Description: An RNA of 207 nucleotides, treated with 2A3 and read out base by base.

[RMDB]
RNA sequence: GGGAACGACUCGAGUAGAGUCGAAAACAAUUUGGUAGACACAACAUAUAACAAUGUGUACAUACAAAUAAACACAUCUAGACAUGUAUACACACACAUAAACGAAGAUUCAAUAGCUUGGAACCUUAGCCAUGAGAUAGCAAUACAAGCUUGCCAACGGGUCCUAAUGAUUCGUCAUUAGGACCCGAAAAGAAACAACAACAACAAC
Reactivity to 2A3 in 0.01 (KOAc 150mM, MgCl2 10mM, bicine 150mM(pH8.5), 24C), signal-to-noise 2, nucleotides 027 to 156: c050a080a090u060u040u120g030g000u070a040g130a060c000a000c010a270a000c050a040u120a060u180a300a030c040a160a120u020g000u010g000u000a040c040a070u100a000c040a010a090a050u150a060a190a010c100a000c020a090u020c050u100a090g030a060c030a060u050g030u010a050u100a010c030a000c010a000c010a000c010a110u060a080a160a000c100g090a100a000g030a040u060u090c040a010a150u050a010g000c030u060u010g040g050a020a030c020c000u020u000a030g010c020c000a040u070g000a000g000a040u090a030g030c020a030a000u060a110c020a050a000g000c010u040u040g030c030c010a040a040
Values cover nucleotides 27 to 156. Values are in units of 0.01, from 0 to 300, in steps of 10. The RNA was probed in 150 mM KOAc, 10 mM MgCl2 and 150 mM bicine (pH 8.5) at 24 C.